[RMDB]
RNA sequence: GGGAACGACUCGAGUAGAGUCGAAAAUGUCCGAGCGGCUAUCGCCGCUGACGGACACGUGGCGAAUUCAGGGCGCUGCAGUGGUAGUAACGUACGAGGGUGCGCGCGUGAGCGUCUGGCGGCGGUGGGCGGGGCGCACCUUCGGGUGCGUUCCGCCAAAAGAAACAACAACAACAAC
Reactivity to 2A3 in 0.01 (KOAc 150mM, MgCl2 10mM, bicine 150mM(pH8.5), 24C), signal-to-noise 3, nucleotides 027 to 126: u100g020u000c010c010g000a040g010c050g070g040c040u040a040u180c100g000c000c000g010c010u010g020a000c000g030g110a010c000a000c020g060u010g100g000c020g040a010a010u150u050c060a090g080g020g040c040g000c050u050g000c010a080g050u120g160g060u080a080g000u040a090a070c030g000u040a050c090g070a100g010g000g070u040g020c030g000c010g020c010g020u050g010a050g110c000g030u020c050u060g030g010c000g000g000c010g030g020u020g030
Reactivity to DMS in 0.01 (KOAc 150mM, MgCl2 10mM, bicine 150mM(pH8.5), 24C), signal-to-noise 1, nucleotides 027 to 126: u000g000u000c000c000g000a110g010c050g000g000c100u010a020u020c160g000c000c000g000c000u000g000a120c030g000g010a080c000a020c190g000u000g000g000c020g030a070a070u010u000c040a190g000g020g000c000g010c010u000g000c020a170g000u020g000g020u020a040g010u030a130a100c060g000u000a000c050g000a300g000g000g030u000g040c030g000c030g000c030g040u000g010a150g000c070g000u000c000u010g020g010c020g000g000c040g000g020u020g030